The record gives the reactivity of an RNA of 177 nucleotides to 2A3 and DMS. For DMS the reverse transcriptase was MarathonRT. Reactivities are given for positions 27 through 126. The 2A3 profile rests on 1,080 reads. It was measured as part of the RMDB library RFMREP.
RNA sequence: GGGAACGACUCGAGUAGAGUCGAAAAGUACGGGAGACGUAGUUCUUCAAUCACAUGACGCCUAGGGGAAAGUCCCCGGAUCUCGGGUAGAAAGUGCCGUGCGCUACUAUGGCGUGCAAUAAUCCCGGAGAGGAGUUAAGUUCGCUUAACUCCUCUCAAAAGAAACAACAACAACAAC
Reactivity to 2A3 in 0.01 (KOAc 150mM, MgCl2 10mM, bicine 150mM(pH8.5), 24C), signal-to-noise 2, nucleotides 027 to 126: g040u040a030c050g040g040g020a050g020a010c090g070u220a100g060u110u010c000u020u020c030a050a130u140c050a040c020a110u050g040a070c060g050c020c050u080a070g030g000g000g080a050a210a160g130u170c010c000c020c020g000g000a050u070c080u070c050g000g030g010u030a060g160a060a090a030g050u050g020c030c020g010u030g030c020g000c000u070a130c020u050a090u150g030g000c010g000u060g010c000a010a000u050a170a020u050c000c000c020g000
Reactivity to DMS in 0.01 (KOAc 150mM, MgCl2 10mM, bicine 150mM(pH8.5), 24C), signal-to-noise 2, nucleotides 027 to 126: g000u000a070c290g010g000g010a060g000a060c040g020u010a100g020u000u000c010u000u010c090a080a100u000c150a080c070a070u000g010a190c060g010c030c020u000a110g020g010g030g000a190a120a150g020u000c010c010c010c020g000g000a030u000c110u010c100g010g000g010u000a060g000a090a060a070g030u000g030c160c160g000u010g000c040g000c010u000a090c140u020a070u000g000g000c040g030u000g000c060a050a040u010a080a110u000c000c010c000g020